The record gives the reactivity of an RNA of 207 nucleotides to 2A3 and DMS. DMS adducts were read by reverse transcription with MarathonRT. The data come from the RNA Mapping Database (RMDB), library RNAMAK. The RNA was probed in 150 mM KOAc, 10 mM MgCl2 and 150 mM bicine (pH 8.5) at 24 C.
RNA sequence: GGGAACGACUCGAGUAGAGUCGAAAACCGGUUCUUCGGAACCGGAAAAAACCGUAGGCUCUCCGUGAUCUACACGUUGAAAUGGUGUUCGAAAGAGCACCAUGGAGUGUAGCGUACGGAGGAGCCUAAACGGAAAAAAAGGCCAUUCGUGGCCUAAACAAUGAAUUUGAUUCGUCAAAUUCAUUGUAAAAGAAACAACAACAACAAC
Reactivity to 2A3 in 0.01 (KOAc 150mM, MgCl2 10mM, bicine 150mM(pH8.5), 24C), signal-to-noise 2, nucleotides 027 to 156: c000c000g010g000u000u000c020u030u090c250g150g000a020a010c000c000g000g020a200a010a000a000a000a000c010c000g000u020a040g000g000c000u010c000u000c000c000g000u000g050a040u020c000u020a000c000a000c010g220u230u040g020a030a050a000u010g010g010u000g010u010u000c050g030a120a070a090g000a020g020c010a010c000c000a000u010g000g000a020g000u000g000u000a000g000c000g020u020a010c000g000g000a020g010g010a000g000c000c000u000a010a010a000c000g000g130a050a030a020a010a000a020a130g000g010c020c010a050u100u100c250g070u110g000g000c000c000u010a020a020
Reactivity to DMS in 0.01 (KOAc 150mM, MgCl2 10mM, bicine 150mM(pH8.5), 24C), signal-to-noise 2, nucleotides 027 to 156: c010c000g010g030u010u000c000u010u020c300g070g010a010a000c000c000g070g020a000a010a060a020a060a050c010c000g020u010a040g020g000c020u000c000u000c000c000g010u000g020a100u000c000u000a000c000a020c000g010u000u010g000a170a180a030u010g020g020u000g040u000u010c010g020a150a140a210g000a020g020c010a000c000c000a010u000g000g010a240g040u010g000u000a020g010c100g020u000a020c010g000g000a020g000g000a030g030c000c000u000a000a000a040c030g000g020a000a000a060a130a110a130a080g040g030c000c000a120u000u010c220g000u000g020g010c000c000u000a010a060